[RMDB]
RNA sequence: GGGAACGACUCGAGUAGAGUCGAAAAACUAGAGCAACUAAGGAAGAGUUUGAUAGAUGGUACGAUGCCAUAAAGAAGGAGUACGAAAUUGAUGACACACAAAUGACAGUUGUCAUGAGUGGUCUCAUGUCACACUGUCUUUCGAGACAGUGUGACAAAAAGAAACAACAACAACAAC
Reactivity to 2A3 in 0.01 (KOAc 150mM, MgCl2 10mM, bicine 150mM(pH8.5), 24C), signal-to-noise 4, nucleotides 027 to 126: a000c090u100a030g020a030g070c000a000a040c030u080a070a000g040g000a030a030g090a030g020u070u070u120g240a150u110a070g130a070u030g040g000u030a090c080g060a100u270g030c000c020a050u140a060a160a000g170a090a070g030g020a010g080u130a040c050g080a020a000a090u090u150g020a060u070g000a060c060a000c000a000c000a300a030a040u040g000a000c030a190g300u300u160g000u150c000a010u010g000a030g000u020g000g020u000c020u010c000a020
Reactivity to DMS in 0.01 (KOAc 150mM, MgCl2 10mM, bicine 150mM(pH8.5), 24C), signal-to-noise 2, nucleotides 027 to 126: a070c060u000a060g010a120g000c130a060a080c090u040a100a080g020g000a110a020g000a030g000u020u050u040g010a060u010a040g000a060u010g010g000u000a070c090g050a100u010g000c010c070a050u000a050a080a120g070a070a090g000g010a000g040u030a040c120g020a020a080a090u020u000g000a060u030g000a030c020a070c000a000c030a020a070a000u000g000a050c020a190g000u040u040g020u000c020a030u010g010a300g000u010g000g000u020c030u000c010a030